[RMDB]
RNA sequence: GGGAACGACUCGAGUAGAGUCGAAAAACUAGUAUGUACACGAUGAGACUGCCGUGUCGUCUAGACUCCGGAUCCAAUAAUCUCAGAUCUGCGAGAUAUUGUCUCAAGAGUACGAGACAAGUACUCAGUGUAUUCACUACUUCGGUGGUGGAUACACAAAAGAAACAACAACAACAAC
Reactivity to DMS in 0.01 (KOAc 150mM, MgCl2 10mM, bicine 150mM(pH8.5), 24C), signal-to-noise 9, nucleotides 027 to 126: a110c020u000a010g000u060a020u010g000u070a010c010a010c000g000a120u030g000a130g010a110c100u020g010c110c010g020u000g000u000c010g000u000c010u000a010g010a170c020u000c010c010g000g000a030u000c030c110a080a080u030a090a100u030c170u020c160a130g000a030u010c040u010g000c150g010a010g000a080u020a040u020u020g000u000c010u000c010a100a100g010a050g000u000a010c020g010a110g010a100c220a040a100g000u000a010c000u000c010a180
Reactivity to 2A3 in 0.01 (KOAc 150mM, MgCl2 10mM, bicine 150mM(pH8.5), 24C), signal-to-noise 9, nucleotides 027 to 126: a000c010u020a010g060u150a050u040g100u100a010c010a000c020g050a060u150g040a040g100a090c090u130g120c090c000g010u010g000u010c000g000u000c000u010a030g020a070c010u000c000c000g010g010a010u000c020c030a060a080u170a170a160u090c070u030c110a050g010a110u010c020u060g100c130g040a010g010a010u080a080u080u120g040u000c010u000c030a050a030g030a010g030u030a020c040g020a020g070a130c060a060a030g020u010a010c010u000c030a010